[RMDB]
RNA sequence: GGGAACGACUCGAGUAGAGUCGAAAAAGAUCCACGCUACGGCGUGGAUCACACGUUCAUCCCUAUUGGGACGGAAGUAGGCCUAGUGCCGAAGGAACGCAUUAGUCAUGCGCUACGGCGCAUGACACACAUCAGAGUCACUUCGGUGACUCUGAAAGGCUGUACUAAGGUUCGCCUUAGUACAGCCAAAAGAAACAACAACAACAAC
Reactivity to 2A3 in 0.01 (KOAc 150mM, MgCl2 10mM, bicine 150mM(pH8.5), 24C), signal-to-noise 2, nucleotides 027 to 156: a000g010a000u010c000c000a010c000g010c000u010a030c300g120g000c000g000u000g000g000a000u000c000a000c000a000c000g000u030u010c030a040u050c030c000c000u110a250u120u300g000g000g000a010c010g010g010a010a000g050u010a010g020g010c030c020u070a050g000u030g250c000c000g000a000a000g010g000a020a000c030g000c060a040u140u160a030g000u000c000a000u000g000c010g000c010u020a030c240g020g000c000g010c020a000u000g000a000c010a000c000a000c010a050u060c010a000g000a000g000u000c000a000c000u060u050c130g100g000u010g000a000c000u000c000u000g000a000a000a000

An RNA of 207 nucleotides, treated with 2A3 and read out base by base. Reactivities are given for positions 27 through 156. It was measured as part of the RMDB library M2RFPK. The reactions ran in a buffer of 150 mM KOAc, 10 mM MgCl2 and 150 mM bicine (pH 8.5), at 24 C.